RNA sequence: GGGAACGACUCGAGUAGAGUCGAAAAGCAAGGCCACCCACAUCGCCGAGUUGCUGGGCAACGAUUACGUUGGCCGCAUCGAGCACAACAAGAAGAAGAUCGACGGCAAGGACUUCACGUUCGUGAACCUGCGCGAUAUCCGCAAGCCGUUCGCCACCUAAUUGUUCAAGUUCGCUUGAACAAUUAGAAAAGAAACAACAACAACAAC
Reactivity to DMS in 0.01 (KOAc 150mM, MgCl2 10mM, bicine 150mM(pH8.5), 24C), signal-to-noise 4, nucleotides 027 to 156: g020c060a120a090g030g010c020c020a100c010c020c020a150c090a100u010c030g040c030c020g000a170g020u000u000g020c030u000g040g010g030c020a030a060c010g010a260u000u000a110c100g020u000u000g010g010c020c020g000c040a070u000c070g010a150g030c100a160c070a050a120c040a090a110g010a080a080g010a110a110g020a080u010c010g010a060c000g020g030c020a130a230g020g010a050c020u000u000c010a030c050g010u000u010c050g010u000g000a100a130c040c020u000g010c000g030c020g010a060u000a030u000c030c000g000c040a150a150g010c000c000g030u000u000c030g030c030c020a070c150
Reactivity to 2A3 in 0.01 (KOAc 150mM, MgCl2 10mM, bicine 150mM(pH8.5), 24C), signal-to-noise 9, nucleotides 027 to 156: g030c050a040a060g070g030c030c030a050c010c030c000a050c020a090u170c120g010c020c020g020a050g080u200u140g030c120u280g020g030g010c020a020a010c020g120a160u240u300a120c060g000u020u000g100g090c000c000g000c000a010u020c020g060a060g020c020a040c020a150a100c040a070a040g090a050a010g060a050a030g040a160u090c030g030a040c020g030g010c040a050a090g030g020a050c060u020u010c030a010c060g180u290u300c110g000u050g020a040a070c010c030u060g010c020g000c020g050a030u050a100u180c050c020g020c040a040a040g010c010c010g030u100u100c050g030c030c000a080c010